[RMDB]
RNA sequence: GGGAACGACUCGAGUAGAGUCGAAAAGAUAGUGUUAAGAAUUUGGUCUUCUGUCGGCAUGAUGUUUUCUUCAUACACCUUGUCAAUAGCUGAAACCAUUGAGUUAAUUAAAUCUGUACCAAGACCAAGAUUCUGGAACAUUCUCAUAACAGAAUCAUGGAAAACACAUUUUCGAAUGUGUUUUCCAAAAAGAAACAACAACAACAAC
Reactivity to DMS in 0.01 (KOAc 150mM, MgCl2 10mM, bicine 150mM(pH8.5), 24C), signal-to-noise 2, nucleotides 027 to 156: g000a100u000a030g030u000g020u000u030a100a050g010a120a200u010u000u000g030g020u010c010u010u000c010u020g080u000c010g050g000c010a010u000g050a020u000g020u000u000u000u010c170u000u010c190a160u010a050c030a020c000c020u000u010g010u010c040a020a060u000a010g020c080u010g010a130a090a070c020c000a060u000u010g000a280g020u000u000a020a070u010u010a050a120a110u000c040u000g030u000a100c120c040a050a060g010a070c030c020a080a080g010a030u000u010c010u010g000g000a070a090c030a040u010u010c020u000c010a030u000a040a240c000a060g000a040a010u000c030a300
Reactivity to 2A3 in 0.01 (KOAc 150mM, MgCl2 10mM, bicine 150mM(pH8.5), 24C), signal-to-noise 1, nucleotides 027 to 156: g020a070u090a060g060u050g000u020u080a040a030g010a030a110u110u070u050g000g020u030c000u050u050c000u080g110u190c100g000g010c030a020u010g000a000u000g130u090u050u090u220c170u090u040c000a050u110a090c060a040c000c000u060u030g040u010c040a000a110u010a070g010c010u030g020a080a020a050c030c000a030u060u140g060a140g060u000u040a000a010u050u120a050a140a030u020c010u040g060u020a060c090c000a000a020g010a040c020c000a010a000g000a060u010u000c000u000g010g010a020a010c010a010u130u000c090u040c060a110u210a090a080c050a010g120a000a070u000c000a070

The record gives the reactivity of an RNA of 207 nucleotides to DMS and 2A3.
For 2A3, 567 sequencing reads were counted.
It was measured as part of the RMDB library OK3TST.